[RMDB]
RNA sequence: GGGAACGACUCGAGUAGAGUCGAAAAAAAGGCCCAGGAACUGGGGCUGACCUGGCUAGCCGAGAUCGGCGCCCACGGUGUGGUGGCCGGGCCGGAUUCCACACUGCAAUCGCAGCCGGCCAACGCGACGUAACGAGAGGUUCGCCUCUCGUUACGUAAAAGAAACAACAACAACAAC
Reactivity to DMS in 0.01 (KOAc 150mM, MgCl2 10mM, bicine 150mM(pH8.5), 24C), signal-to-noise 2, nucleotides 027 to 126: a050a070a120g010g000c000c040c070a080g010g000a080a080c130u000g040g000g010g000c040u000g000a130c030c040u000g000g040c070u000a120g010c020c010g000a150g000a060u010c040g000g000c070g020c070c010c020a150c120g000g000u040g000u000g010g000u000g000g010c040c080g000g000g040c040c000g000g010a130u000u000c030c080a070c080a190c050u020g020c160a080a070u010c080g020c040a100g000c040c030g000g000c010c000a050a060c110g040c110g050
Reactivity to 2A3 in 0.01 (KOAc 150mM, MgCl2 10mM, bicine 150mM(pH8.5), 24C), signal-to-noise 1, nucleotides 027 to 126: a000a010a030g080g000c070c010c020a020g070g070a110a000c080u070g050g030g130g000c000u000g010a030c010c020u000g040g030c050u080a030g060c000c000g070a080g090a300u270c050g000g000c060g000c020c020c000a050c100g080g010u060g000u000g030g100u020g000g050c000c000g000g010g020c030c010g030g000a070u100u040c020c000a020c040a030c100u050g010c020a110a180u300c150g000c050a000g040c050c000g000g030c050c000a020a020c070g040c110g030